[RMDB]
RNA sequence: GGGAACGACUCGAGUAGAGUCGAAAAUGCUAUUUCCAACAAUUUGACUAACACCACCUAAAUGGCUGUGAUCAACAACAACCGCCCACGGACUACUAAUUGCCCUAAUCAGCCUUACUUGACUAAAAUGGUCAUCAGAAGUCGGAUCGGCCACCUCUAUGACAUCUCUUUUCGAAGAGAUGUCAUAAAAAGAAACAACAACAACAAC
Reactivity to DMS in 0.01 (KOAc 150mM, MgCl2 10mM, bicine 150mM(pH8.5), 24C), signal-to-noise 2, nucleotides 027 to 156: u010g030c040u000a070u000u000u000c010c010a140a060c050a100a160u000u010u010g030a070c030u000a120a090c060a090c020c000a050c070c040u000a070a080a210u000g040g000c020u010g030u010g030a190u020c040a050a050c050a100a050c070a050a090c010c000g030c030c000c040a080c090g000g000a060c010u000a220c070u000a050a130u000u000g070c000c020c010u010a110a060u000c030a080g010c050c020u010u000a060c010u000u020g000a090c000u000a040a060a130a110u020g010g030u000c020a020u000c020a110g020a080a070g020u010c040g000g000a080u000c020g020g000c020c040a030c060c020u010c050
Reactivity to 2A3 in 0.01 (KOAc 150mM, MgCl2 10mM, bicine 150mM(pH8.5), 24C), signal-to-noise 3, nucleotides 027 to 156: u120g000c040u090a110u040u060u000c050c000a020a020c060a140a150u060u070u150g040a060c020u050a140a010c030a030c040c010a050c010c040u090a100a120a110u120g030g020c040u020g010u030g030a070u080c040a030a070c010a040a020c010a010a040c050c060g020c030c010c000a030c030g040g000a010c020u050a020c030u050a120a080u090u090g030c000c010c000u050a080a040u060c010a000g020c000c010u030u070a070c030u060u080g040a030c010u090a050a040a090a200u160g020g030u010c010a020u010c010a040g040a210a010g100u060c050g030g020a030u050c040g000g000c020c000a050c010c040u070c020